About this RNA:
Structure probing data (2A3) for a 207-nucleotide construct. Values cover nucleotides 27 to 156. As a SHAPE reagent, 2A3 marks flexible, mostly unpaired nucleotides at the ribose 2'-OH. The RNA was probed in 150 mM KOAc, 10 mM MgCl2 and 150 mM bicine (pH 8.5) at 24 C.
RNA sequence: GGGAACGACUCGAGUAGAGUCGAAAAGUGAAAGCUCAUUCUCUCGCAAUGUGUAACUCAUGAUUCUCAUGACCCCUGGUUGGAGAGAUCCGGACUAGGAGCCAGGGGGCCUCUGAUUCUGCCAGCCAAAACUGUCGUAAGUUCGCUUACGACAGAACGCAUUAGGAGGAUUCGUCCUCCUAAUGCGAAAAGAAACAACAACAACAAC
Reactivity to 2A3 in 0.01 (KOAc 150mM, MgCl2 10mM, bicine 150mM(pH8.5), 24C), signal-to-noise 3, nucleotides 027 to 156: g060u050g030a060a050a040g030c010u010c040a010u070u020c070u000c020u040c090g060c080a050a070u060g060u020g020u090a060a040c020u010c060a050u050g060a100u170u030c050u000c060a030u130g100a150c000c000c000c000u010g000g020u020u110g110g040a130g000a020g010a100u000c020c030g050g100a100c100u130a090g090g010a000g000c020c000a000g000g000g000g010g010c010c020u030c030u050g040a100u080u060c020u060g020c010c010a030g010c040c020a040a010a060a110c010u010g000u000c000g010u000a000a000g010u020u130c210g020c140u000u000a000c000g010a000c000a000g000a000a000